Chemical mapping of a 207-nucleotide RNA with 2A3. The RNA was probed in 150 mM KOAc, 10 mM MgCl2 and 150 mM bicine (pH 8.5) at 24 C. Values cover nucleotides 27 to 156.
RNA sequence: GGGAACGACUCGAGUAGAGUCGAAAACUUAACAAAACCAGCCACUGCAGGGUAUUGGUUUACAUGGCAAACAUCUUUGGAUGAAGGGACAGCUGUUCCAACUCAUCAUCCACUUCAUAUCAAGAGUCUUACUCUCUGGCGUCAAACUGUAGAGGCAAUUUUAGGACGUCUUCGGACGUCCUAAAAUAAAAGAAACAACAACAACAAC
Reactivity to 2A3 in 0.01 (KOAc 150mM, MgCl2 10mM, bicine 150mM(pH8.5), 24C), signal-to-noise 2, nucleotides 027 to 156: c000u070u180a000a050c010a020a070a050a030c000c000a030g050c010c010a050c080u070g000c040a050g000g040g000u190a120u140u150g020g000u010u020u050a040c050a050u040g010g010c080a080a160a030c040a160u050c120u120u240u040g010g010a010u010g090a070a120g020g000g010a020c040a050g150c110u140g090u070u080c010c010a080a130c000u090c080a090u000c000a020u020c020c010a030c010u070u110c030a070u080a030u120c040a010a000g000a000g000u030c050u040u070a020c000u010c000u010c020u060g040g050c020g050u040c050a080a060a120c010u030g040u040a000g000a040g040g000c010a040